[RMDB]
RNA sequence: GGGAACGACUCGAGUAGAGUCGAAAAGGUCAACAUCAAGAACUGUGGGCCUUUUAUUGCCUAUAGAACUUAUAACGAACAUGGUUCUUGCCUUUUACCAGAACCAUCCGGGUGUUGUCUCCAUAGAAACAGGUAAAGCUGUCCGUUACUGUGGGCUCGAUUAAUAAUCCUUCGGGAUUAUUAAUCGAAAAGAAACAACAACAACAAC
Reactivity to 2A3 in 0.01 (KOAc 150mM, MgCl2 10mM, bicine 150mM(pH8.5), 24C), signal-to-noise 3, nucleotides 027 to 156: g020g000u040c010a010a020c010a040u120c080a080a090g100a160a100c060u050g010u020g000g000g000c010c080u000u080u010u010a100u110u080g000c010c000u060a070u070a130g090a070a060c020u200u140a100u130a280a090c070g040a050a020c070a050u000g000g000u000u020c000u020u050g010c010c040u140u230u130u180a110c040c020a000g010a000a010c010c010a020u020c040c040g140g020g020u000g030u020u020g000u000c020u000c050c010a000u010a030g020a020a080a010c030a070g000g050u140a140a090a050g100c050u060g060u040c000c040g050u030u040a080c000u030g010u020g040g000g000c000u000

An RNA of 207 nucleotides, treated with 2A3 and read out base by base. Values cover nucleotides 27 to 156. Conditions: 150 mM KOAc, 10 mM MgCl2 and 150 mM bicine (pH 8.5), 24 C. The data come from the RNA Mapping Database (RMDB), library PDB130.